The record gives the reactivity of an RNA of 177 nucleotides to DMS and 2A3. For 2A3, 3,085 sequencing reads were counted. The reactions ran in a buffer of 150 mM KOAc, 10 mM MgCl2 and 150 mM bicine (pH 8.5), at 24 C. DMS adducts were read by reverse transcription with MarathonRT. Source: RMDB library TTRDES, as collected in RNAgym.
RNA sequence: GGGAACGACUCGAGUAGAGUCGAAAAGAUAUGGAGUCCGGCGUGCGAGUCUCACCUCGGAAACGAGGUGGAGACGAUGAGCACCCCGACUCCUAAGUCAAAGCUGACAGUCUUCGGACUGUCAGCACGAAAGAGUGAUCUUCGGAUCACUCUUUCGAAAAGAAACAACAACAACAAC
Reactivity to DMS in 0.01 (KOAc 150mM, MgCl2 10mM, bicine 150mM(pH8.5), 24C), signal-to-noise 2, nucleotides 027 to 126: g000a020u010a100u000g000g000a020g010u000c020c300g000g010c300g010u010g000c000g000a150g010u000c000u000c010a070c000c010u000c010g010g010a010a040a040c000g030a020g000g020u010g010g020a020g000a010c010g010a070u020g000a190g030c000a010c010c040c010c100g010a020c000u000c010c000u000a000a040g000u000c010a130a130a130g010c000u000g000a030c000a020g000u010c000u000u010c250g030g010a020c010u000g010u000c000a000g010c000a020
Reactivity to 2A3 in 0.01 (KOAc 150mM, MgCl2 10mM, bicine 150mM(pH8.5), 24C), signal-to-noise 1, nucleotides 027 to 126: g010a000u000a000u060g010g000a010g000u020c080c050g060g050c150g000u010g000c170g160a170g070u000c000u010c000a000c010c010u010c010g000g000a000a000a010c020g000a000g000g000u040g020g020a050g000a020c000g020a170u130g070a050g000c000a020c000c000c030c000g000a020c000u000c010c010u000a030a000g000u000c060a090a140a050g020c000u000g020a000c000a000g000u010c010u020u180c300g180g010a000c000u000g020u000c000a000g010c050a010